[RMDB]
RNA sequence: GGGAACGACUCGAGUAGAGUCGAAAACACAAGACGUUUGCGGCGGUCUUGUUUCGUCGUGUAAACUACGCUUUGGAAAUGAGGCGUUAAGUUUUGGCGGUUGCGCUACUGCAACCUUGAAAAGUGGAAGGUAAUAUGUUAACUCCAAAAAUCAAAACAAAAACAAACUGUUCGCAGUUUGUUUUUGAAAAGAAACAACAACAACAAC
Reactivity to 2A3 in 0.01 (KOAc 150mM, MgCl2 10mM, bicine 150mM(pH8.5), 24C), signal-to-noise 4, nucleotides 027 to 156: c080a000c010a020a020g060a030c040g040u060u080u130g070c090g090g000c020g040g000u030c030u080u050g040u030u040u030c020g010u000c020g010u040g070u140a000a040a020c020u080a010c010g000c000u090u060u050g100g050a110a200a150u160g010a030g000g010c000g010u020u120a070a030g000u000u010u040u060g060g000c040g010g000u040u060g000c050g010c060u230a090c020u060g030c000a000a060c010c000u010u090g050a070a050a000a010g090u100g040g010a080a050g040g030u100a080a050u090a100u220g070u160u080a060a030c010u030c030c040a020a080a010a010a050u210c110a030a150a000a030
Reactivity to DMS in 0.01 (KOAc 150mM, MgCl2 10mM, bicine 150mM(pH8.5), 24C), signal-to-noise 2, nucleotides 027 to 156: c060a170c020a020a040g010a070c030g010u030u000u010g020c100g030g000c020g040g010u000c050u000u010g030u000u000u000c040g000u000c060g040u030g000u000a060a050a130c000u010a070c000g020c030u000u000u020g000g020a160a110a160u010g010a020g010g040c000g010u010u010a050a110g020u000u010u010u000g020g020c070g000g030u010u000g020c000g020c060u000a000c140u020g030c000a040a020c010c000u000u000g000a060a080a070a150g030u000g020g000a100a020g010g000u010a050a120u000a090u020g000u010u000a050a060c040u000c050c030a010a070a050a050a180u000c080a030a050a080a210
Description
The record gives the reactivity of an RNA of 207 nucleotides to 2A3 and DMS. Values cover nucleotides 27 to 156. The reactions ran in a buffer of 150 mM KOAc, 10 mM MgCl2 and 150 mM bicine (pH 8.5), at 24 C.